[RMDB]
RNA sequence: GGGAACGACUCGAGUAGAGUCGAAAACAGCGUUACGGUGCCCCACGCCUGACGGAUGAACUGCGUGCUCAGGGUUACCCCUUUAACGUAAAAACCGUGGCGGCAAGCCUGCGCCGUCAGGGACUGAUCAAAGCAUUUAAUUCGUUAAAUGCUUUGAAAAAGAAACAACAACAACAAC
Reactivity to 2A3 in 0.01 (KOAc 150mM, MgCl2 10mM, bicine 150mM(pH8.5), 24C), signal-to-noise 7, nucleotides 027 to 126: c010a010g050c030g040u060u080a040c070g010g050u040g010c000c000c000c010a020c020g020c010c070u060g030a050c040g090g070a150u120g050a100a070c020u030g020c020g050u050g020c040u050c160a040g030g010g050u140u200a090c030c000c000c000u070u160u120a070a020c040g030u050a090a050a000a040a050c020c020g130u020g010g000c000g010g000c020a040a020g060c010c050u100g030c060g010c010c000g000u010c000a000g030g000g030a070c080u090g030a030
Reactivity to DMS in 0.01 (KOAc 150mM, MgCl2 10mM, bicine 150mM(pH8.5), 24C), signal-to-noise 9, nucleotides 027 to 126: c080a110g010c040g010u000u000a050c190g010g010u000g010c030c010c010c050a100c090g000c020c040u000g010a060c040g010g000a120u010g010a090a120c100u000g010c020g010u000g010c300u000c090a070g000g010g010u000u010a140c070c000c070c070u000u010u010a070a060c130g010u000a050a060a060a070a060c030c010g000u000g000g000c020g010g000c020a050a100g010c050c070u000g010c110g000c000c000g010u000c010a020g000g010g000a150c100u000g000a220
The record gives the reactivity of an RNA of 177 nucleotides to 2A3 and DMS. Reactivities are given for positions 27 through 126. The 2A3 profile rests on 19,130 reads. The RNA was probed in 150 mM KOAc, 10 mM MgCl2 and 150 mM bicine (pH 8.5) at 24 C. 2A3 adducts were read by reverse transcription with SuperScript II with manganese.